[RMDB]
RNA sequence: GGGAACGACUCGAGUAGAGUCGAAAAGGGAUCCUCUUGGCGGGAUCCAGCUAAUAAUCUCUAGCGUCCAGCAACUUGGGAUCCGAGGUUAUAAGGGAUCCCUUGCAGUACGCGUCGGAUCGUAGAGUAAUAAAGAUCCGUUCGCGGAUCUUUAUUAAAAAGAAACAACAACAACAAC
Reactivity to 2A3 in 0.01 (KOAc 150mM, MgCl2 10mM, bicine 150mM(pH8.5), 24C), signal-to-noise 4, nucleotides 027 to 126: g040g000g000a010u020c020c020u070c150u270u300g200g110c120g040g000g000a000u000c010c000a010g000c010u070a080a130u110a180a100u050c010u000c040u050a020g150c000g020u000c010c010a010g000c000a030a040c040u060u050g000g000g000a000u000c000c000g080a090g160g160u300u160a210u090a230a100g130g010g000a020u020c020c000c000u000u020g000c000a000g020u060a030c060g040c010g050u090c090g010g020a030u050c020g050u050a020g020a040g150
Reactivity to DMS in 0.01 (KOAc 150mM, MgCl2 10mM, bicine 150mM(pH8.5), 24C), signal-to-noise 7, nucleotides 027 to 126: g010g000g010a010u000c000c000u000c040u010u010g030g020c140g020g010g010a010u000c000c000a060g010c080u010a080a100u000a100a060u000c010u000c020u000a190g020c030g000u000c020c020a140g020c030a060a070c190u010u000g010g010g010a010u000c010c010g010a160g010g010u010u010a090u010a100a150g010g000g000a010u000c000c000c000u000u000g000c070a100g010u000a050c090g010c010g000u010c180g000g000a020u000c060g010u000a050g010a150g000

The record gives the reactivity of an RNA of 177 nucleotides to 2A3 and DMS.